[RMDB]
RNA sequence: GGGAACGACUCGAGUAGAGUCGAAAACAAAAUGGGAUCGCUGUAUUAGAGAUCGGCGUCCUUUCAUUCUAUAUACUUUGGAGUUUUAAAAUGUCUCUAAUAAAACAAAAACAAAAACAAAAACAAACAGCUAUAUGCUGUUCGCAGCAUAUAGCUGAAAAGAAACAACAACAACAAC
Reactivity to 2A3 in 0.01 (KOAc 150mM, MgCl2 10mM, bicine 150mM(pH8.5), 24C), signal-to-noise 3, nucleotides 027 to 126: c040a000a130a020a100u060g010g040g000a070u300c090g000c030u000g050u120a150u050u110a080g060a070g000a060u060c000g000g000c000g000u000c000c000u000u030u000c010a010u040u000c020u060a070u020a060u060a300c130u040u030u270g070g010a080g030u010u070u050u170a120a180a030a020u100g050u000c000u000c000u000a050a090u130a100a120a020a020c040a000a040a060a020a000c040a040a100a030a030a020c020a010a170a020a010a000c020a020a070a000
Chemical mapping of a 177-nucleotide RNA with 2A3. Reactivities are given for positions 27 through 126. Source: RMDB library OK1LIB, as collected in RNAgym.